[RMDB]
RNA sequence: GGGAACGACUCGAGUAGAGUCGAAAACCCGAUCUGUUCGCAGAUCGGGAAAAAACCUUUGUGUGCUCUGAAACAACAGCUUACCGCACCCAUUGGGUGCGAUAAGACAUGUUUAGAGCACACUCUGGUAAAAAAGGAGCAAGUUCGCUUGCUCCAAUCAUUAGUAAGUCUUCGGACUUACUAAUGAAAAAGAAACAACAACAACAAC
Reactivity to DMS in 0.01 (KOAc 150mM, MgCl2 10mM, bicine 150mM(pH8.5), 24C), signal-to-noise 2, nucleotides 027 to 156: c010c000c000g010a000u010c000u000g010u000u010c300g020c010a000g000a010u000c000g000g000g040a010a000a030a090a090a020c010c020u010u000u000g010u010g030u000g010c000u000c000u000g020a050a030a070c020a030a080c080a120g000c020u010u000a010c000c020g040c010a020c000c000c000a300u020u000g060g080g050u000g000c010g040a000u010a000a000g000a020c080a250u010g020u000u000u000a040g000a030g020c020a010c000a000c010u000c010u020g030g030u010a000a040a070a060a120a090g000g010a030g020c030a030a020g000u000u000c190g020c000u010u010g000c000u000c000c020a010a050
Reactivity to 2A3 in 0.01 (KOAc 150mM, MgCl2 10mM, bicine 150mM(pH8.5), 24C), signal-to-noise 4, nucleotides 027 to 156: c000c000c000g000a000u000c000u010g040u090u160c260g010c130a000g000a000u000c000g010g000g000a160a040a000a000a000a020c010c010u000u010u000g000u000g000u000g000c000u000c000u100g220a080a020a010c030a000a040c040a120g030c000u000u000a000c010c000g000c000a000c000c000c080a300u210u300g020g010g000u000g000c000g000a000u000a000a000g060a060c020a080u040g000u000u010u020a010g000a000g000c000a000c000a000c000u000c000u010g010g010u070a140a160a010a010a000a050g010g000a000g000c000a000a010g000u100u180c250g080c190u000u000g000c000u000c000c000a000a000